[RMDB]
Structure probing data (2A3 and DMS) for a 207-nucleotide construct. For DMS the reverse transcriptase was MarathonRT. 2A3 adducts were read by reverse transcription with SuperScript II with manganese. The 2A3 profile rests on 3,940 reads.
RNA sequence: GGGAACGACUCGAGUAGAGUCGAAAAUCUGUAAAGCUUGCCAACCACGGAGACGAACUGUUUGCUGUUGAGAGCGUGGUUCUGGAACAGCAACACAUUGUUCAGCAUUCGGCGGAAGAUGUCCACGUACUUGGAAUGAACAGGCUCGACACCGUCGUGCAUAGUCUCCAUUCGUGGAGACUAUGCAAAAAGAAACAACAACAACAAC
Reactivity to 2A3 in 0.01 (KOAc 150mM, MgCl2 10mM, bicine 150mM(pH8.5), 24C), signal-to-noise 5, nucleotides 027 to 156: u020c020u020g070u100a010a070a090g030c050u070u070g030c040c010a050a050c030c010a030c070g050g030a060g030a070c080g020a050a020c030u030g030u050u060u070g020c020u020g010u040u060g060a060g020a020g050c070g060u070g010g040u120u030c050u060g030g050a010a020c000a010g020c000a000a030c040a010c010a120u070u160g030u070u030c030a020g020c040a050u110u040c060g020g000c020g050g010a060a020g070a040u120g050u060c040c020a060c080g040u080a110c070u060u100g080g080a130a120u090g040a070a080c010a040g020g010c010u020c030g030a010c020a020c060c000g020u040c000g010
Reactivity to DMS in 0.01 (KOAc 150mM, MgCl2 10mM, bicine 150mM(pH8.5), 24C), signal-to-noise 3, nucleotides 027 to 156: u010c040u020g020u000a050a060a090g020c010u010u000g000c010c020a080a130c030c010a090c030g020g000a100g010a100c050g010a060a050c030u000g010u000u010u000g000c000u010g040u010u000g000a140g020a120g000c050g010u000g000g020u010u010c010u010g000g020a070a120c020a050g000c040a040a050c100a040c040a080u000u010g010u000u000c040a120g030c070a220u010u000c040g020g030c030g000g010a080a100g010a100u000g010u010c000c030a050c110g010u010a050c110u000u000g030g010a090a100u000g000a130a070c020a040g000g020c040u010c030g010a170c040a050c010c020g010u000c110g030